Overview:
An RNA of 177 nucleotides, treated with DMS and 2A3 and read out base by base. Values are in units of 0.01, from 0 to 300, in steps of 10. It was measured as part of the RMDB library M2PK50.

[RMDB]
RNA sequence: GGGAACGACUCGAGUAGAGUCGAAAAACGUACCUAUUCGUAGGUACGUGAUUUAAAGCUAGUCAUAUAAAAGGAAGACUAGCAAUAUAGAAUCCUAUAUUAAUAGCACAUGUUUCGACAUGUGCAAGAAUAGAGAGAAAUUCGUUUCUCUCUAUUCAAAAGAAACAACAACAACAAC
Reactivity to DMS in 0.01 (KOAc 150mM, MgCl2 10mM, bicine 150mM(pH8.5), 24C), signal-to-noise 5, nucleotides 027 to 126: a010c000g010u000a000c000c000u000a030u010u010c150g020u000a000g000g010u000a000c000g000u000g010a040u010u000u000a040a090a240g010c000u000a000g000u010c000a150u010a180u010a110a090a140a100g010g010a170a170g000a020c000u000a000g010c000a020a040u000a050u000a060g000a140a130u000c010c010u000a070u010a100u010u010a100a100u010a170g000c000a010c000a000u000g010u000u000u010c170g010a030c000a000u000g010u000g010c000a020a030
Reactivity to 2A3 in 0.01 (KOAc 150mM, MgCl2 10mM, bicine 150mM(pH8.5), 24C), signal-to-noise 6, nucleotides 027 to 126: a000c000g000u000a000c000c000u010a020u030u070c240g070u030a010g000g000u000a000c000g000u000g010a000u020u090u060a090a060a000g000c000u010a000g000u010c020a040u160a040u120a300a220a070a030g150g050a140a160g010a010c000u000a000g000c000a000a000u050a000u010a010g090a050a050u010c000c020u060a070u020a030u300u250a150a210u110a130g000c000a000c000a010u000g000u020u080u090c160g050a010c010a000u010g000u000g000c010a000a000